[RMDB]
Conditions: 150 mM KOAc, 10 mM MgCl2 and 150 mM bicine (pH 8.5), 24 C. An RNA of 207 nucleotides, treated with DMS and 2A3 and read out base by base. Reactivities are given for positions 27 through 156. For 2A3, 997 sequencing reads were counted. It was measured as part of the RMDB library OK3TST. For 2A3 the reverse transcriptase was SuperScript II with manganese.

RNA sequence: GGGAACGACUCGAGUAGAGUCGAAAACUGACCAGCCUUGACCUUGGAUGUCGACUAAAAUUCAUCAGCAUAACGAACCCCCAACGACUUCGAAAAAAAAGCCCGAUUCGAAAGAAUUGCGCAUUCAACAUACCAUGGUGGGCGGCUUCGUGUCGUGAAUAACUGUAGAAUUCGUUCUACAGUUAUUAAAAGAAACAACAACAACAAC
Reactivity to DMS in 0.01 (KOAc 150mM, MgCl2 10mM, bicine 150mM(pH8.5), 24C), signal-to-noise 2, nucleotides 027 to 156: c040u010g000a070c030c030a140g040c010c040u010u000g030a040c060c020u000u010g020g010a100u010g030u000c040g000a180c100u000a030a060a080a110u000u020c050a120u000c040a080g000c030a080u020a080a110c040g000a080a170c030c010c020c030c070a070a170c020g010a090c020u000u000c010g000a050a010a000a110a200a040a110a230g020c050c040c050g020a110u000u000c010g000a170a090a270g000a030a050u000u000g020c140g000c050a060u000u000c020a060a030c010a050u000a070c000c010a030u010g000g010u000g000g010g010c030g020g010c070u000u000c050g000u000g000u000c010g030u020g020
Reactivity to 2A3 in 0.01 (KOAc 150mM, MgCl2 10mM, bicine 150mM(pH8.5), 24C), signal-to-noise 2, nucleotides 027 to 156: c040u080g040a050c040c000a020g010c000c020u080u150g130a040c000c010u050u030g000g000a050u070g010u030c010g010a090c080u160a080a050a110a140u180u060c030a080u020c020a050g070c040a080u070a170a110c070g050a080a090c030c000c010c020c000a040a010c010g010a010c000u180u190c080g000a090a010a060a000a000a000a020a000g040c070c140c000g010a000u010u010c000g010a040a040a050g000a000a050u040u040g010c060g000c030a020u010u110c010a030a020c000a020u100a150c040c010a030u060g000g010u030g000g060g010c000g010g000c000u060u060c030g040u030g010u000c030g010u010g020